[RMDB]
RNA sequence: GGGAACGACUCGAGUAGAGUCGAAAACAGGGGACAUCUGGCAAUGUCUGGUUGUUACUACUAGGUGGGGUGGGGCAUUGGCAUCAAGUGAGUAGAGGUCAGGGUUGCUGCUAAGCAUUCCGCGAUGGUAGGAAUCAGAGUUCGCUCUGAUUCCUACAAAAGAAACAACAACAACAAC
Reactivity to 2A3 in 0.01 (KOAc 150mM, MgCl2 10mM, bicine 150mM(pH8.5), 24C), signal-to-noise 1, nucleotides 027 to 126: c000a020g110g000g000g000a020c020a090u040c060u110g020g070c160a180a260u080g060u080c070u000g070g060u060u030g000u000u000a090c010u000a010c010u000a010g120g060u180g070g230g000g080u160g000g030g000g000c020a040u070u130g000g000c000a020u060c030a080a070g080u170g130a030g030u140a050g030a020g010g000u000c030a020g010g010g000u040u090g080c010u060g010c010u030a030a030g030c010a020u120u060c000c030g130c070g030a000u130g070
Reactivity to DMS in 0.01 (KOAc 150mM, MgCl2 10mM, bicine 150mM(pH8.5), 24C), signal-to-noise 1, nucleotides 027 to 126: c030a160g000g020g000g010a030c020a030u000c080u020g010g030c110a170a030u020g000u030c040u000g010g010u000u000g030u020u020a090c100u020a100c100u000a080g000g010u000g020g020g000g020u010g000g000g000g000c070a000u010u000g000g010c040a060u010c150a100a070g000u000g020a060g010u000a060g000a070g030g010u000c090a120g010g000g000u000u000g020c020u020g000c070u010a070a080g000c080a190u000u010c080c050g050c200g020a010u010g010
Record summary
Structure probing data (2A3 and DMS) for a 177-nucleotide construct. 2A3 adducts were read by reverse transcription with SuperScript II with manganese. For 2A3, 641 sequencing reads were counted. Reactivities are given for positions 27 through 126. It was measured as part of the RMDB library OK2TRN.